[RMDB]
Notes
Structure probing data (2A3 and DMS) for a 177-nucleotide construct. Values cover nucleotides 27 to 126. The DMS profile rests on 1,684 reads. Reactivities are rounded to 0.1 and cut off at 0 and 3. The RNA was probed in 150 mM KOAc, 10 mM MgCl2 and 150 mM bicine (pH 8.5) at 24 C. For DMS the reverse transcriptase was MarathonRT.

RNA sequence: GGGAACGACUCGAGUAGAGUCGAAAAAACUACUUCUUCGGAAGUAGUUAUUGCGUGGGUCUAAUAAGCCCAAGGUGCCAGGUUCGACCCUUCCUGGGCGCAUCACCGACCGAUUCGUCGGUCGGAAGUUACACCGUUACUUCGGUAACGGUGUAACAAAAGAAACAACAACAACAAC
Reactivity to 2A3 in 0.01 (KOAc 150mM, MgCl2 10mM, bicine 150mM(pH8.5), 24C), signal-to-noise 2, nucleotides 027 to 126: a010a000c000u010a020c000u010u000c000u030u080c300g060g000a010a000g010u000a000g000u000u020a130u090u110g020c010g020u050g030g020g000u030c020u030a050a030u090a200a060g020c020c010c030a000a030g150g010u060g050c010c000a000g000g040u090u130c080g070a140c010c010c040u030u000c010c000u010g020g090g000c010g000c000a070u130c050a000c040c000g000a000c000c000g010a010u030u040c200g010u010c000g140g000u000c010g000g020a010a010
Reactivity to DMS in 0.01 (KOAc 150mM, MgCl2 10mM, bicine 150mM(pH8.5), 24C), signal-to-noise 2, nucleotides 027 to 126: a040a010c000u000a000c000u020u000c000u000u000c190g000g010a010a010g000u000a000g000u000u010a020u030u000g010c060g000u000g010g020g030u000c030u000a170a080u030a140a220g030c000c000c000a040a060g010g010u000g020c010c020a040g000g020u000u020c080g000a240c010c020c030u010u010c020c010u000g030g010g010c010g020c090a070u000c120a300c000c000g000a000c000c000g000a010u010u020c190g030u000c010g020g000u010c010g000g010a020a040